[RMDB]
RNA sequence: GGGAACGACUCGAGUAGAGUCGAAAAAAGAAGAGAAGAUUUUCGAGGAAAUACUCCCAAGAAGUUCCCGGAGGGAUCCAAGAGACGGACGACUUUCCCCCAUUGGUUGGGAAAAGUCCCGGAACCAGCGCUUCCUAGUUCGCUAGGAAGAAAAGAAACAACAACAACAAC
Reactivity to DMS in 0.01 (KOAc 150mM, MgCl2 10mM, bicine 150mM(pH8.5), 24C), signal-to-noise 8, nucleotides 027 to 129: a070a040g030a080a040g030a040g000a110a070g000a090u010u010u010u010c040g000a160g010g030a090a080a100u040a070c060u010c010c020c060a090a060g000a080a140g020u010u010c050c030c040g050g020a050g050g000g050a070u020c070c070a050a100g010a020g000a070c090g000g000a050c080g020a020c010u020u010u010c020c000c010c050c040a180u020u020g050g030u050u000g030g020g050a040a010a020a040g030u000c020c040c000g010g000a050a050c080c070a060g000c140g020
Reactivity to 2A3 in 0.01 (KOAc 150mM, MgCl2 10mM, bicine 150mM(pH8.5), 24C), signal-to-noise 8, nucleotides 027 to 129: a010a000g090a020a000g050a000g010a110a010g010a040u030u020u030u050c020g020a040g000g040a050a090a020u090a110c030u020c020c020c010a010a030g050a040a010g020u020u020c010c010c000g000g010a010g010g010g010a040u020c030c030a060a020g030a000g010a070c040g020g010a020c060g000a000c040u010u010u010c030c020c010c010c020a070u090u270g140g010u110u100g010g010g000a040a050a020a020g020u010c000c000c010g030g010a010a030c010c010a020g050c030g010